The record gives the reactivity of an RNA of 177 nucleotides to DMS and 2A3. 2A3 adducts were read by reverse transcription with SuperScript II with manganese. Reactivities are rounded to 0.1 and cut off at 0 and 3. The RNA was probed in 150 mM KOAc, 10 mM MgCl2 and 150 mM bicine (pH 8.5) at 24 C. It was measured as part of the RMDB library OK2TRN.
RNA sequence: GGGAACGACUCGAGUAGAGUCGAAAAACGGUCCUAUCCGCACAAUCUCGCUAGUGUAUGCAAUGGUGUCAGCGUUUGGAGGCUGAUUAUGGGAUGGAUCUCUGGAUAUGGCAGUCUCUAGAUGGAAAUAGCGUGAGGGAUUCGUCCCUCACGCUAUAAAAGAAACAACAACAACAAC
Reactivity to DMS in 0.01 (KOAc 150mM, MgCl2 10mM, bicine 150mM(pH8.5), 24C), signal-to-noise 1, nucleotides 027 to 126: a070c140g010g000u000c020c040u000a060u020c040c050g010c130a070c060a130a080u010c030u000c080g010c060u020a130g010u010g030u000a070u000g030c070a070a110u010g000g020u000g000u000c020a030g010c060g020u000u010u000g010g010a070g000g010c030u000g000a070u010u010a050u000g010g010g000a040u010g050g000a120u020c040u010c050u010g020g000a080u000a100u010g010g010c040a060g020u000c020u000c000u010a040g020a100u000g000g000a070a100
Reactivity to 2A3 in 0.01 (KOAc 150mM, MgCl2 10mM, bicine 150mM(pH8.5), 24C), signal-to-noise 1, nucleotides 027 to 126: a000c050g010g020u050c020c010u020a030u010c010c010g000c050a050c040a070a150u010c010u040c050g000c060u040a010g070u050g070u130a040u150g070c070a050a060u110g050g030u030g050u110c030a030g000c050g100u050u080u130g060g040a050g060g000c000u000g060a060u130u070a050u090g030g010g020a000u010g120g050a090u000c100u000c020u070g140g070a020u010a090u220g100g040c010a030g070u000c000u000c030u000a080g020a060u140g010g020a000a300